[RMDB]
An RNA of 177 nucleotides, treated with 2A3 and read out base by base. It was measured as part of the RMDB library OK1LIB.

RNA sequence: GGGAACGACUCGAGUAGAGUCGAAAAUGGGGACAGUUCAGGAGGGGGCUCGCAUCUCUCCUUCACGCGCCCGCCGCCUUACCUGAGGCCGCCAUCCACGCCGGUUGAGUCGCGUUCUGCCGCCUCCCCUUCCGUCGGAGUUCGCUCCGACGGAAGGAAAAGAAACAACAACAACAAC
Reactivity to 2A3 in 0.01 (KOAc 150mM, MgCl2 10mM, bicine 150mM(pH8.5), 24C), signal-to-noise 1, nucleotides 027 to 126: u110g000g010g000g000a000c010a000g050u050u080c040a000g030g000a040g000g040g010g010g020c070u070c120g130c050a250u040c110u000c000u010c000c020u000u000c060a010c000g000c010g010c000c000c000g010c000c000g070c000c000u040u150a190c010c050u070g030a010g080g000c010c000g070c030c000a000u060c000c040a020c040g020c010c030g000g010u020u130g080a030g070u070c040g000c020g060u150u020c020u080g020c000c010g030c000c030u020c010c000